[RMDB]
RNA sequence: GGGAACGACUCGAGUAGAGUCGAAAACGAAAAACAGUGAGUGGACGGAAUAAAUCCCCUUCCCACCUCCCCACUGUCCACUCACUGUCUUCCUAAUAGGAAAUAUAAAUCGGGGGUGGGAAGGGGAGGCUGCCAUAGCUUUCGAGCUAUGGCAGCCAAAAGAAACAACAACAACAAC
Reactivity to 2A3 in 0.01 (KOAc 150mM, MgCl2 10mM, bicine 150mM(pH8.5), 24C), signal-to-noise 1, nucleotides 027 to 126: c040g060a000a000a000a000a010c000a000g000u000g000a000g000u000g000g060a000c030g000g000a060a060u160a010a070a050u110c000c000c000c070u000u000c030c000c000a060c000c000u010c010c000c000c060a100c070u000g000u000c000c000a000c050u050c040a000c000u020g000u020c000u000u020c000c000u090a240a160u100a280g100g110a000a220a000u210a010u090a020a060a000u180c160g000g010g000g000g000u000g000g000g020a010a010g000g000g000g000a020